[RMDB]
RNA sequence: GGGAACGACUCGAGUAGAGUCGAAAAACAAUGGUAUUUUGUCACCGGGGAUGUAGUUGCUUUCUAUCCCAAUAUUCCGUUGGACUUGUGCAUCGAAAUCGUUUGUAAUAUGUACGAGGAAUGGUUAAACCAGGAUGAAUUUCGAUUCAUCCUGGUUAAAAGAAACAACAACAACAAC
Reactivity to DMS in 0.01 (KOAc 150mM, MgCl2 10mM, bicine 150mM(pH8.5), 24C), signal-to-noise 4, nucleotides 027 to 126: a040c110a070a080u050g030g030u020a040u010u010u020u030g000u020c100a130c030c020g000g020g010g010a090u010g010u000a090g010u000u010g010c150u020u010u000c060u030a110u030c020c020c010a050a110u030a080u010u000c010c010g020u020u000g010g010a140c040u000u010g010u000g000c030a030u000c100g000a130a100a120u030c100g030u020u000u000g000u000a090a100u030a050u010g000u000a030c010g000a020g000g000a050a060u030g020g010u010u010a060
Reactivity to 2A3 in 0.01 (KOAc 150mM, MgCl2 10mM, bicine 150mM(pH8.5), 24C), signal-to-noise 1, nucleotides 027 to 126: a020c120a080a040u090g070g030u150a130u040u270u090u170g100u080c000a000c050c030g000g000g010g000a070u100g000u060a070g040u040u070g050c100u090u050u000c010u080a060u040c010c000c000a000a000u170a060u170u070c040c040g010u040u030g010g070a050c000u000u000g000u000g000c010a010u000c050g140a110a190a120u160c100g140u090u150u280g030u060a090a080u030a070u160g000u000a000c000g000a010g000g040a020a080u070g080g000u000u140a150